Chemical mapping of a 177-nucleotide RNA with DMS and 2A3. The DMS profile rests on 16,514 reads. Source: RMDB library OK1LIB, as collected in RNAgym. Reactivities are given for positions 27 through 126.
RNA sequence: GGGAACGACUCGAGUAGAGUCGAAAAGGCGGCCAGUUGCUAUAGCUCCAUCACCGCGGGACUGGCCGGCAAGUGGCAGGGCCCGGCCGCUACCGCGAUGGCCCAAGCCGCCGCGCCCUAAGCGGCGCCAGCGUAAUGAUUUCGAUCAUUACGCUGGAAAAGAAACAACAACAACAAC
Reactivity to DMS in 0.01 (KOAc 150mM, MgCl2 10mM, bicine 150mM(pH8.5), 24C), signal-to-noise 6, nucleotides 027 to 126: g000g010c020g000g020c030c160a070g010u000u000g010c070u020a080u030a110g000c070u020c060c030a100u010c030a090c150c050g010c030g020g010g000a090c290u000g010g000c000c000g000g000c080a080a100g010u010g000g030c040a050g010g000g010c150c010c030g010g000c010c000g000c060u010a140c030c020g010c010g020a040u010g000g000c030c010c020a140a160g000c010c000g000c000c030g010c070g000c010c020c010u010a120a120g010c100g010g010c040g000
Reactivity to 2A3 in 0.01 (KOAc 150mM, MgCl2 10mM, bicine 150mM(pH8.5), 24C), signal-to-noise 7, nucleotides 027 to 126: g020g010c020g020g000c030c040a080g020u100u070g090c070u140a080u100a300g030c010u030c020c010a030u070c030a030c040c080g000c010g000g000g020a040c040u040g000g000c000c010g000g000c010a050a070g090u120g180g020c090a080g020g080g000c000c010c000g000g000c010c000g000c040u070a040c000c010g000c010g000a020u030g000g000c000c000c010a020a010g000c000c010g000c000c000g000c010g010c000c010c000u140a250a040g010c080g070g000c010g000